[RMDB]
RNA sequence: GGGAACGACUCGAGUAGAGUCGAAAAUGUCAAUUUGUUAGAUGAUCAGAGGGGAAAAGAAGAGCUAGAGCAAUGGUUACGGAAUGGUAGCAAUACCAUAUCGUGAUCUCUAAUGAGCGUCCUCAUAGUCAUGGAAUAUGUUCGCAUAUUCCAUGACAAAAGAAACAACAACAACAAC
Reactivity to 2A3 in 0.01 (KOAc 150mM, MgCl2 10mM, bicine 150mM(pH8.5), 24C), signal-to-noise 3, nucleotides 027 to 126: u100g040u020c030a050a080u060u040u030g100u120u130a090g030a160u130g020a030u090c040a020g010a080g100g030g000g010a050a140a040a050g100a070a020g040a010g020c020u040a030g010a000g080c050a080a100u180g000g000u020u010a000c000g010g000a060a020u000g000g010u010a020g000c000a040a020u000a010c000c010a000u000a030u030c010g000u000g020a000u010c020u000c020u050a100a070u120g030a000g020c010g020u010c000c010u020c000a020u060a020
Reactivity to DMS in 0.01 (KOAc 150mM, MgCl2 10mM, bicine 150mM(pH8.5), 24C), signal-to-noise 3, nucleotides 027 to 126: u010g000u010c050a090a090u000u020u000g000u000u000a090g010a080u000g000a080u000c090a060g010a120g010g000g000g000a080a060a070a080g010a090a080g000a100g020c050u000a040g010a110g020c230a090a060u010g010g010u010u010a030c000g010g000a050a010u000g010g020u000a000g000c300a100a130u000a010c000c000a000u000a030u000c000g000u000g000a010u000c000u010c080u010a060a090u010g000a040g000c030g000u000c020c020u010c050a080u000a140